[RMDB]
RNA sequence: GGGAACGACUCGAGUAGAGUCGAAAAGAGCGUUAAUAACACACCGAUGUGCAGUUUGGCCGUAGGCGUGCCAGCGUAAGUUAUUACAGGGUGUAACUGGCAGAGACAGUACCGUCGGACCUGUGGCGAAGCACCCUUGAUUCGUCAAGGGUGCUUCAAAAGAAACAACAACAACAAC
Reactivity to 2A3 in 0.01 (KOAc 150mM, MgCl2 10mM, bicine 150mM(pH8.5), 24C), signal-to-noise 3, nucleotides 027 to 126: g040a010g040c050g020u040u080a080a060u110a270a030c010a010c000a010c020c020g060a040u080g030u050g030c020a020g040u050u060u090g090g000c030c060g070u060a060g090g070c020g040u060g030c010c010a020g000c020g030u030a040a050g050u060u080a130u100u080a080c050a030g090g120g020u110g040u040a110a000c020u030g010g000c000a010g010a000g020a190c020a010g040u050a060c010c060g040u010c000g000g050a080c000c020u080g000u030g060g000c080
Reactivity to DMS in 0.01 (KOAc 150mM, MgCl2 10mM, bicine 150mM(pH8.5), 24C), signal-to-noise 4, nucleotides 027 to 126: g000a080g020c080g010u000u010a060a080u020a100a100c040a060c060a090c090c020g010a050u010g020u000g010c020a100g010u000u010u010g020g030c010c040g020u010a070g020g030c120g040u010g010c000c010a030g000c080g020u000a030a040g000u000u010a090u010u010a070c060a150g000g010g020u000g020u000a090a080c030u000g010g000c070a090g000a100g010a060c040a050g010u000a030c100c070g020u000c020g000g020a120c090c030u000g020u010g010g010c210
Chemical mapping of a 177-nucleotide RNA with 2A3 and DMS. The data come from the RNA Mapping Database (RMDB), library OK2TST. For DMS the reverse transcriptase was MarathonRT. Conditions: 150 mM KOAc, 10 mM MgCl2 and 150 mM bicine (pH 8.5), 24 C. The DMS profile rests on 4,095 reads.